The record gives the reactivity of an RNA of 177 nucleotides to 2A3 and DMS. For 2A3 the reverse transcriptase was SuperScript II with manganese.

RNA sequence: GGGAACGACUCGAGUAGAGUCGAAAAUAGAGGGAAAACCUGUCUACUUUUUUAAUGAGUAUAGGGUUUGGUAUUAAUUUAGAUGGCUGAGUCACUUGGGCUCGAAACCUUAGGGGGGAGACUCCAAACUCACUCAAUAGUUCGCUAUUGAGUGAGUAAAAGAAACAACAACAACAAC
Reactivity to 2A3 in 0.01 (KOAc 150mM, MgCl2 10mM, bicine 150mM(pH8.5), 24C), signal-to-noise 2, nucleotides 027 to 126: u070a000g060a080g060g000g000a000a010a000a130c000c010u030g110u060c000u030a020c000u160u220u100u120u190u300a240a180u300g010a000g020u040a020u030a040g030g000g000u010u020u060g030g000u050a050u170u080a150a130u100u070u150a030g040a140u110g040g000c040u080g020a020g120u060c000a020c110u090u110g050g020g010c000u030c040g000a070a020a030c000c030u050u080a090g000g000g010g030g020g040a040g020a000c020u020c020c010a050a100
Reactivity to DMS in 0.01 (KOAc 150mM, MgCl2 10mM, bicine 150mM(pH8.5), 24C), signal-to-noise 4, nucleotides 027 to 126: u010a110g010a110g000g000g010a220a020a030a020c010c000u000g010u010c300u000a040c010u000u000u000u030u040u030a100a120u010g000a010g010u000a010u000a300g010g010g010u000u000u000g010g000u000a080u010u010a050a100u000u000u010a060g000a060u000g000g010c070u010g000a070g020u000c030a080c200u020u010g020g010g040c070u010c070g000a100a100a070c020c010u010u000a090g010g000g010g000g020g010a180g020a080c060u010c020c040a040a090